[RMDB]
RNA sequence: GGGAACGACUCGAGUAGAGUCGAAAAAGAAAGAGCAACUUAGGAUUUUAGGCUCCCCGGCGUGUGUCGAACCAUGCCGGGCCAAACCCAUAGGGCUGGCGGUCCCUGUGCGGUCAAAAUUCAAAAAGAAUGCUAACUAGUUCGCUAGUUAGCAUUCAAAAGAAACAACAACAACAAC
Reactivity to DMS in 0.01 (KOAc 150mM, MgCl2 10mM, bicine 150mM(pH8.5), 24C), signal-to-noise 3, nucleotides 027 to 126: a070g000a060a080a040g020a010g010c010a040a030c090u000u000a060g020g000a020u000u000u000u000a130g000g000c020u000c020c010c000c010g010g000c010g040u010g000u010g000u000c290g010a150a220c220c000a010u000g000c000c000g010g000g010c030c020a040a210a010c000c000c010a030u000a010g000g000g010c050u020g020g010c120g010g000u010c000c000c000u010g020u000g000c130g010g010u000c090a010a000a010a010u000u000c020a090a050a090a110a090
Reactivity to 2A3 in 0.01 (KOAc 150mM, MgCl2 10mM, bicine 150mM(pH8.5), 24C), signal-to-noise 2, nucleotides 027 to 126: a000g130a010a070a000g010a000g000c010a010a040c030u020u030a020g010g000a000u010u010u010u030a010g000g010c000u000c010c000c000c010g020g000c010g000u010g000u020g080u170c090g060a050a030c050c010a010u010g010c000c020g010g000g000c010c000a000a000a000c000c000c000a000u010a000g020g010g020c030u040g110g090c050g040g050u120c010c000c000u000g010u010g000c090g010g000u010c000a000a000a000a020u010u020c020a050a010a030a000a060